[RMDB]
RNA sequence: GGGAACGACUCGAGUAGAGUCGAAAAUCCAUCCGAGGGACGAAGCCGCCACCGGGCGCUCCCCUCGGACUCCCUCCGGGGAGGUUCACAUCCCCAACCCGCGGGCCGGCUACUCUUCUUUUCCUUUCCUCGUCUUCAACGGUCAACCUUCCGAGUUGAAUCAAUAUUUGUUCGCAAAUAUUGAUUCAAAAGAAACAACAACAACAAC
Reactivity to 2A3 in 0.01 (KOAc 150mM, MgCl2 10mM, bicine 150mM(pH8.5), 24C), signal-to-noise 1, nucleotides 027 to 156: u040c000c050a030u070c010c000g020a000g020g000g000a010c080g120a130a090g150c290c090g010c030c110a240c180c210g180g090g000c010g010c000u010c000c000c000c000u000c000g010g000a000c010u010c000c010c000u010c120c120g010g010g000g030a000g030g010u230u240c090a090c010a130u060c000c020c000c020a040a070c050c030c030g010c030g020g030g000c040c000g050g020c020u060a010c020u060c000u120u110c030u120u140u070u130c010c000u070u000u000c010c000u030c010g090u000c040u140u020c070a100a060c010g000g020u040c050a030a060c060c000u000u090c030c020g100a110g090u040u030
Overview:
Chemical mapping of a 207-nucleotide RNA with 2A3. The RNA was probed in 150 mM KOAc, 10 mM MgCl2 and 150 mM bicine (pH 8.5) at 24 C. It was measured as part of the RMDB library VIROID. Values cover nucleotides 27 to 156.